[RMDB]
RNA sequence: GGGAACGACUCGAGUAGAGUCGAAAAAGAGUCCAUCUACGGAUGGACUCAUCACAGUCCAUUAUUACUUUUGGUACGCGCUAGGCCAGACUCAAACUCGUACCGUGAGUAAUAAUGCACUGUGGAAAAAUAGAAUCCUUUUCGAAGGAUUCUAUUUAAAAGAAACAACAACAACAAC
Reactivity to DMS in 0.01 (KOAc 150mM, MgCl2 10mM, bicine 150mM(pH8.5), 24C), signal-to-noise 9, nucleotides 027 to 126: a080g000a020g010u000c000c000a010u000c000u000a120c200g020g010a010u000g000g000a000c000u000c000a020u020c010a010c010a000g010u000c220c000a010u000u000a000u000u000a000c000u000u000u010u020g010g010u000a000c010g010c140g000c050u010a270g010g000c050c140a120g010a200c120u020c050a050a110a210c010u000c000g000u000a000c000c000g010u000g000a010g000u000a000a000u000a000a000u000g000c300a000c000u000g010u000g000g010a010a050
Reactivity to 2A3 in 0.01 (KOAc 150mM, MgCl2 10mM, bicine 150mM(pH8.5), 24C), signal-to-noise 9, nucleotides 027 to 126: a000g000a000g000u000c000c000a000u000c000u020a040c300g070g000a000u000g000g000a000c000u000c000a000u010c000a000c000a000g000u020c030c000a000u000u000a000u000u000a000c000u020u010u030u210g000g000u000a000c010g020c010g020c090u050a060g050g030c060c090a120g070a260c050u060c140a050a090a050c010u010c010g000u000a000c000c000g000u010g000a000g000u000a000a000u000a000a000u000g000c010a000c000u000g000u020g010g010a020a160
Description: An RNA of 177 nucleotides, treated with DMS and 2A3 and read out base by base. The reactions ran in a buffer of 150 mM KOAc, 10 mM MgCl2 and 150 mM bicine (pH 8.5), at 24 C. DMS adducts were read by reverse transcription with MarathonRT. It was measured as part of the RMDB libraries RFM100 and RFMREP.